An RNA of 177 nucleotides, treated with 2A3 and DMS and read out base by base. For DMS the reverse transcriptase was MarathonRT. 2A3 adducts were read by reverse transcription with SuperScript II with manganese. The RNA was probed in 150 mM KOAc, 10 mM MgCl2 and 150 mM bicine (pH 8.5) at 24 C. Values are in units of 0.01, from 0 to 300, in steps of 10. Source: RMDB library TTRDES, as collected in RNAgym. For DMS, 2,343 sequencing reads were counted. The 2A3 profile rests on 4,233 reads.

RNA sequence: GGGAACGACUCGAGUAGAGUCGAAAAGAUAUGGAGUCCAUACUAGACAACAGCUACGCGGUCGGAAACGACCGGUAGACAUGUCUAAUGGACUCCUAAGUCAAAGCGCGGAGUUCGCUCCGCGCAAUCACUGUAGAAACUUCGGUUUCUACAGUGAAAAAGAAACAACAACAACAAC
Reactivity to 2A3 in 0.01 (KOAc 150mM, MgCl2 10mM, bicine 150mM(pH8.5), 24C), signal-to-noise 3, nucleotides 027 to 126: g010a000u040a020u070g010g000a000g000u000c000c000a010u040a150c230u030a110g010a030c180a300a060c060a300g050c020u030a010c080g100c010g300g000u000c000g010g000a000a000a000c000g000a010c030c000g010g000u000a000g020a010c010a200u300g000u000c020u020a020a020u000g000g010a000c000u000c000c000u000a000a000g020u000c010a190a020a020g000c010g000c010g000g010a000g020u120u210c290g130c190u000c020c000g000c010g010c000a000a000
Reactivity to DMS in 0.01 (KOAc 150mM, MgCl2 10mM, bicine 150mM(pH8.5), 24C), signal-to-noise 2, nucleotides 027 to 126: g000a030u000a120u000g010g000a030g000u000c000c000a030u000a170c300u010a030g010a010c000a080a070c300a160g000c010u000a000c010g020c020g000g000u000c000g010g000a030a030a070c000g000a010c010c000g020g000u000a000g000a020c070a260u010g000u000c010u000a050a030u000g000g000a040c000u000c000c000u000a010a060g010u000c020a120a100a180g000c000g010c000g000g010a050g000u000u010c280g020c030u000c020c000g020c010g010c000a000a020